[RMDB]
RNA sequence: GGGAACGACUCGAGUAGAGUCGAAAACGGUAUUGGUCAAGGCUAUCCCGACAGCGCACCUUCAAAAGGGCGCUUAAUCCCCGGCCAAGCGCCGAAAUAUGAAUAGACACCGCUGGGCUGGUAGGGCAAAACAUGGCGAUCUUCGGAUCGCCAUGAACAAUUAUGUUUGGUUCGCCAAACAUAAUUGAAAAGAAACAACAACAACAAC
Reactivity to 2A3 in 0.01 (KOAc 150mM, MgCl2 10mM, bicine 150mM(pH8.5), 24C), signal-to-noise 3, nucleotides 027 to 156: c020g000g010u080a100u090u160g060g000u040c040a060a050g080g000c000u020a040u080c000c010c000g030a020c020a040g010c000g010c100a300c060c000u070u090c070a100a120a030a000g000g000g000c000g000c000u000u000a000a010u010c010c010c010c000g010g000c010c010a040a010g060c050g010c040c040g080a070a060a000u300a090u140g090a050a030u080a070g060a030c030a010c060c020g000c020u030g010g030g000c020u010g010g050u060a070g040g000g000c040a040a110a030a000c000a010u000g000g000c000g000a000u000c000u040u020c110g040g000a000u000c000g000c010c000a000u000g000a000a000
Reactivity to DMS in 0.01 (KOAc 150mM, MgCl2 10mM, bicine 150mM(pH8.5), 24C), signal-to-noise 3, nucleotides 027 to 156: c030g010g030u010a110u010u000g000g020u000c050a070a120g010g010c070u000a110u000c030c000c020g000a080c120a070g000c030g030c000a070c010c000u020u010c130a110a070a150a170g000g010g020c010g030c010u010u000a020a110u000c000c020c000c020g020g020c010c030a060a040g030c040g010c040c030g010a060a070a080u000a160u000g010a160a160u000a140g010a190c050a080c060c010g030c020u000g020g040g030c030u000g020g010u000a050g010g000g030c070a040a050a080a140c000a000u000g000g010c000g020a020u000c020u010u010c260g050g010a030u000c000g000c000c000a000u010g000a040a140